Structure probing data (2A3 and DMS) for a 207-nucleotide construct. 2A3 adducts were read by reverse transcription with SuperScript II with manganese. The 2A3 profile rests on 6,000 reads. The RNA was probed in 150 mM KOAc, 10 mM MgCl2 and 150 mM bicine (pH 8.5) at 24 C. The DMS profile rests on 10,993 reads.
[RMDB]
RNA sequence: GGGAACGACUCGAGUAGAGUCGAAAACAGUGCAAGGUUUUAAGUAGAGGAAUGGUGUGCCUGCUUUGGCUGCUGCCUUGAGAAUAUUCUGUGGGGGACAAAGGUCAUAUAGUUAAGAGAUAGUGGUGGUUGGGAUCAGAGUCUAAACUGCAGGUGACUAAUUGGCAUUAUUCGUAAUGCCAAUUAGAAAAGAAACAACAACAACAAC
Reactivity to 2A3 in 0.01 (KOAc 150mM, MgCl2 10mM, bicine 150mM(pH8.5), 24C), signal-to-noise 7, nucleotides 027 to 156: c030a010g020u020g050c020a010a040g040g020u030u050u100u240a100a060g030u080a040g020a030g030g050a100a070u070g020g020u060g020u040g040c000c010u050g020c060u090u070u080g040g000c020u050g020c040u030g010c010c010u040u040g020a030g030a090a050u080a080u200u080c050u060g030u070g030g020g000g000g010a010c040a040a090a020g020g000u030c030a010u090a010u040a160g040u060u080a060a020g020a000g010a080u060a070g040u020g020g010u020g010g000u070u070g020g000g000a020u060c010a010g020a010g040u000c010u060a070a040a040c030u050g000c010a010g020g040u030g020a010
Reactivity to DMS in 0.01 (KOAc 150mM, MgCl2 10mM, bicine 150mM(pH8.5), 24C), signal-to-noise 4, nucleotides 027 to 156: c060a110g000u000g030c030a070a080g000g020u000u000u000u000a040a140g020u000a120g010a090g010g000a060a080u000g020g030u000g010u000g020c010c000u010g000c060u000u000u000g040g010c020u010g020c060u010g010c040c040u000u010g020a150g010a100a130u000a080u000u000c060u010g040u000g010g020g020g010g030a090c070a040a060a100g020g020u000c030a070u010a110u000a090g000u000u000a080a120g010a130g010a060u000a060g030u000g010g050u000g020g010u000u010g050g000g000a070u010c040a090g000a120g030u000c020u000a020a050a080c050u000g010c030a030g020g010u000g020a190